[RMDB]
RNA sequence: GGGAACGACUCGAGUAGAGUCGAAAACUUCAUUAUUGGUGGUGAUCAUUCCACCUUCGCUUGUAGUCAUGUUUUUAGUUGGAUAAAAACUAAAGCAAGCCAUAUCACCAAGAUUUCCAACCUAAAAGAUCCGACUACGUUUCGACGUAGUCGGAUCAAAAGAAACAACAACAACAAC
Reactivity to 2A3 in 0.01 (KOAc 150mM, MgCl2 10mM, bicine 150mM(pH8.5), 24C), signal-to-noise 2, nucleotides 027 to 126: c010u070u040c020a120u040u180a080u100u250g000g000u010g000g000u000g140a080u070c030a050u130u000c040c020a040c020c000u000u030c000g000c000u000u000g060u060a090g120u150c000a130u170g180u000u010u000u000u010a030g050u030u070g030g030a050u040a010a030a000a000a020c010u030a200a000a040g000c010a020a020g000c000c010a080u030a130u160c030a040c010c020a040a000g000a210u070u110u000c000c020a020a000c000c070u120a030a040a080a000